An RNA of 177 nucleotides, treated with DMS and 2A3 and read out base by base. The 2A3 profile rests on 5,391 reads. For 2A3 the reverse transcriptase was SuperScript II with manganese. Reactivities are given for positions 27 through 126. DMS adducts were read by reverse transcription with MarathonRT. For DMS, 2,270 sequencing reads were counted.

[RMDB]
RNA sequence: GGGAACGACUCGAGUAGAGUCGAAAAGGUGGCUCGAACUCACGUGAGAAGAGACGACUCAACGAGUCACCGAUUUAGCAUGUUCGUCCUUAAGGGGCACCCAGCAAGAUAUUGGACGUUCAUGCGAGGGAUGCUGUUGCUUCGGCAAUAGCAUCCCAAAAGAAACAACAACAACAAC
Reactivity to DMS in 0.01 (KOAc 150mM, MgCl2 10mM, bicine 150mM(pH8.5), 24C), signal-to-noise 2, nucleotides 027 to 126: g020g000u020g000g020c030u000c000g000a080a080c080u040c140a210c260g000u050g030a060g020a140a130g000a160g040a080c210g000a020c060u010c120a070a300c000g000a000g020u000c000a000c000c000g000a000u010u000u000a040g000c020a020u000g000u000u000c010g010u000c000c000u000u000a180a160g000g020g010g070c000a040c100c040c060a190g030c060a010a010g010a040u030a100u040u020g000g010a000c010g000u000u020c000a000u000g000c000g000a040
Reactivity to 2A3 in 0.01 (KOAc 150mM, MgCl2 10mM, bicine 150mM(pH8.5), 24C), signal-to-noise 5, nucleotides 027 to 126: g000g000u010g010g020c000u000c000g070a090a050c050u040c080a130c100g160u160g020a100g020a210a050g100a080g050a070c080g040a070c020u010c070a040a080c010g000a000g000u000c000a000c000c000g000a000u020u000u080a000g000c000a000u000g000u000u000c000g010u000c010c000u060u150a100a070g000g000g060g040c030a130c020c030c000a010g060c080a110a060g060a120u150a100u100u200g010g010a000c000g000u000u000c000a000u000g000c000g010a040